An RNA of 207 nucleotides, treated with DMS and 2A3 and read out base by base. Source: RMDB library OK3TST, as collected in RNAgym. For DMS, 7,733 sequencing reads were counted. Values cover nucleotides 27 to 156. 2A3 adducts were read by reverse transcription with SuperScript II with manganese. High DMS reactivity at an A or C suggests that its Watson-Crick edge is free.

RNA sequence: GGGAACGACUCGAGUAGAGUCGAAAAGAAGGUAGAGGAUAUAUUCUUAAUUCGUUAAGUCAAGGUUUAACAGGUUCACAAUAUUAUUUUUCCAUGUUAGUCGCUAGAUCACAGUCUACUGACAUUGUAUGUGAAACAUCAAGAACCGGAACAUUGGACGUCUUAUAAUUUUCGAAUUAUAAGACGUAAAAGAAACAACAACAACAAC
Reactivity to DMS in 0.01 (KOAc 150mM, MgCl2 10mM, bicine 150mM(pH8.5), 24C), signal-to-noise 4, nucleotides 027 to 156: g010a080a040g000g040u000a070g010a080g000g010a140u000a060u000a100u010u000c030u010u000a070a120u010u000c060g010u000u020a040a070g010u000c060a080a090g040g010u000u000u000a030a110c040a060g010g020u000u010c020a090c060a070a110u010a080u010u000a180u000u010u010u000u000c080c040a050u000g020u010u000a110g000u000c280g000c070u000a070g010a130u000c130a110c230a140g010u010c020u000a050c030u000g010a030c010a100u000u010g030u000a070u000g030u010g000a050a040a050c100a110u000c080a060a070g020a050a040c060c030g000g010a050a060c060a120u000u000g020g000
Reactivity to 2A3 in 0.01 (KOAc 150mM, MgCl2 10mM, bicine 150mM(pH8.5), 24C), signal-to-noise 5, nucleotides 027 to 156: g040a010a010g030g020u070a010g020a040g080g040a040u060a020u020a060u230u070c040u070u120a150a120u120u110c060g050u040u090a060a020g020u030c050a030a050g000g000u000u030u050a080a050c040a060g000g050u020u030c010a010c020a070a070u060a050u260u130a130u090u210u020u080u010c020c010a010u020g000u010u020a010g010u020c050g000c030u040a040g020a190u160c060a030c060a120g050u010c010u020a020c010u010g010a000c000a010u040u080g050u050a090u040g040u000g040a060a040a020c030a040u110c040a060a080g010a030a030c010c000g010g010a040a020c030a030u020u070g080g040